[RMDB]
RNA sequence: GGGAACGACUCGAGUAGAGUCGAAAAUCGCAUUGAUCCCAUGGUUAUCUUCCACCUCUCUUACCAGACUAUCAUAACAAAGUCUGGCCUUUUUCCCAUUGGAUCAUGCUAUCCCUUAGGAACUCUCCUUAAGGAGCUCGUUCGCGAGCUCCUUAAGAAAAGAAACAACAACAACAAC
Reactivity to 2A3 in 0.01 (KOAc 150mM, MgCl2 10mM, bicine 150mM(pH8.5), 24C), signal-to-noise 3, nucleotides 027 to 126: u070c010g010c020a000u030u240g000a000u010c000c000c000a000u000g000g000u160u120a080u150c040u100u020c050c030a050c060c000u040c020u030c000u040u070a080c010c020a020g000a000c010u050a050u170c060a240u210a280a090c040a160a040a010g000u010c000u010g020g000c010c000u020u080u010u020u020c000c010c020a010u000u010g000g000a010u010c000a050u000g020c010u040a040u060c000c000c000u040u100a060g000g000a050a070c030u020c000u020c020
Reactivity to DMS in 0.01 (KOAc 150mM, MgCl2 10mM, bicine 150mM(pH8.5), 24C), signal-to-noise 1, nucleotides 027 to 126: u000c260g030c040a050u000u030g000a000u000c040c000c160a160u000g000g020u000u000a000u000c040u030u000c000c020a030c120c030u000c020u000c000u030u000a270c000c000a050g060a020c000u000a190u010c210a280u150a170a250c120a080a030a020g000u000c000u000g010g010c040c000u040u000u040u000u040c180c000c000a020u080u010g000g000a000u000c000a020u040g000c010u010a060u000c000c000c040u110u210a070g000g000a000a030c000u030c000u000c010